[RMDB]
Structure probing data (DMS) for a 177-nucleotide construct. DMS adducts were read by reverse transcription with MarathonRT. The RNA was probed in 150 mM KOAc, 10 mM MgCl2 and 150 mM bicine (pH 8.5) at 24 C.
RNA sequence: GGGAACGACUCGAGUAGAGUCGAAAAGGAGCUCAAUGAAGCCCCCUCAACUAAAGGCGGGUUUCCCGCCUGAGGGGGCUGAUGUGCGAAAGCUUUAAAAAGUAAGUUCAAAAGUAGGGUUAGGCAAAUGUACGCUAACCUUCGGGUUAGCGUACAUAAAAGAAACAACAACAACAAC
Reactivity to DMS in 0.01 (KOAc 150mM, MgCl2 10mM, bicine 150mM(pH8.5), 24C), signal-to-noise 2, nucleotides 027 to 126: g040g000a200g010c030u010c170a300a200u030g000a300a020g010c010c000c000c000c000u050c040a250a060c170u040a080a190a000g000g040c030g000g000g000u040u030u020c000c000c000g000c000c020u010g020a000g000g000g000g000g040c000u010g000a040u000g000u030g000c220g010a150a150a070g010c000u000u010u010a060a100a060a030a060g000u040a050a070g000u000u030c080a020a070a070a020g000u000a080g030g000g030u000u000a080g010g000c100a100a020